[RMDB]
The record gives the reactivity of an RNA of 177 nucleotides to DMS and 2A3. The DMS profile rests on 34,318 reads. Reactivities are given for positions 27 through 126. The 2A3 profile rests on 5,587 reads. The reactions ran in a buffer of 150 mM KOAc, 10 mM MgCl2 and 150 mM bicine (pH 8.5), at 24 C.
RNA sequence: GGGAACGACUCGAGUAGAGUCGAAAAGGCAGGAAUAGAAUGGGCCGAAUCUAGUGUCUCACUGCAGGCCAGAUGCUAUUUUUGUUUGGCGCAAGGCCUGGUGGCUGAUGCGGCUGUGUUCUAAGAGCAAUAUUAUAAAAUUCGUUUUAUAAUAUUGAAAAGAAACAACAACAACAAC
Reactivity to DMS in 0.01 (KOAc 150mM, MgCl2 10mM, bicine 150mM(pH8.5), 24C), signal-to-noise 8, nucleotides 027 to 126: g000g000c030a060g000g010a120a100u010a010g000a030a020u000g010g010g010c000c000g010a060a030u010c020u040a020g010u010g010u010c130u050c020a040c030u010g010c050a020g010g020c010c010a050g010a160u030g020c000u000a010u010u020u030u030u030g010u010u010u010g010g010c000g020c090a150a140g000g020c000c010u000g010g020u010g000g000c020u010g000a040u000g000c020g000g000c010u000g010u030g020u000u000c000u000a050a090g010a160g010
Reactivity to 2A3 in 0.01 (KOAc 150mM, MgCl2 10mM, bicine 150mM(pH8.5), 24C), signal-to-noise 4, nucleotides 027 to 126: g070g020c030a020g000g080a030a070u030a020g010a010a010u040g020g010g000c000c000g010a000a010u000c030u060a020g020u030g090u080c030u050c050a030c020u120g030c010a000g000g000c000c000a010g030a050u040g000c000u020a090u060u100u020u090u140g270u090u140u070g010g000c000g000c050a050a020g000g000c000c010u000g010g000u010g020g000c020u020g000a010u030g010c000g000g010c010u060g070u020g010u130u010c010u020a040a010g020a000g050